[RMDB]
RNA sequence: GGGAACGACUCGAGUAGAGUCGAAAAUGAUCGAGAGAUCUAACGAUGUACGCGAGUCAAUAGCACAGACUCGAGCGAAAGCUCGGUCGAAAGACCGCGUACAUCGGUCGGCAAGUGUAUAGUCAAAACGUGCUAGGACGUUCGCGUCCUAGCACGUAAAAGAAACAACAACAACAAC
Reactivity to DMS in 0.01 (KOAc 150mM, MgCl2 10mM, bicine 150mM(pH8.5), 24C), signal-to-noise 1, nucleotides 027 to 126: u000g010a010u000c000g000a200g000a210g010a000u010c010u010a100a090c040g000a010u000g010u000a020c010g010c000g000a090g020u000c000a030a070u000a140g000c070a170c170a230g000a010c010u010c010g000a000g000c000g010a140a130a170g010c000u000c010g000g000u000c010g000a090a100a110g000a050c000c000g000c000g020u000a000c000a000u000c060g000g010u040c070g020g010c070a080a070g000u000g050u000a090u000a170g020u010c050a060a010a100